[RMDB]
RNA sequence: GGGAACGACUCGAGUAGAGUCGAAAAUAAUCGAAUAAUUUGCCAGUGAUAUGAUGACAUUGUCACAAAGAUCACAAGGGACACAGAGUUGACUUUUGCUCAAGGUGGAACGGCAAAGCUCUAUAGAUGACAAGUGCUGAUUCGUCAGCACUUGUCAAAAAGAAACAACAACAACAAC
Reactivity to DMS in 0.01 (KOAc 150mM, MgCl2 10mM, bicine 150mM(pH8.5), 24C), signal-to-noise 2, nucleotides 027 to 126: u000a130a180u040c070g030a050a000u000a080a100u070u010u000g010c000c000a190g020u020g000a000u000a060u020g020a150u010g000a010c010a180u010u060g030u000c030a010c010a030a090a120g020a010u010c010a020c010a210a130g000g000g010a300c100a030c060a030g010a050g000u000u020g000a050c160u010u070u040u000g020c010u000c010a060a080g000g020u030g000g000a120a130c000g000g010c000a030a070a010g000c010u000c010u000a120u030a070g000a170
Reactivity to 2A3 in 0.01 (KOAc 150mM, MgCl2 10mM, bicine 150mM(pH8.5), 24C), signal-to-noise 2, nucleotides 027 to 126: u070a000a070u110c020g050a010a010u150a130a190u010u000u000g000c000c000a030g000u000g000a000u000a010u030g140a220u020g000a020c170a270u110u300g020u010c000a000c040a030a010a040g190a000u020c000a000c000a150a070g020g010g010a010c000a000c000a080g040a000g060u070u060g140a240c160u120u090u140u120g000c000u030c000a000a050g180g000u010g000g060a080a030c010g000g000c000a020a020a020g000c040u000c000u060a060u030a140g120a110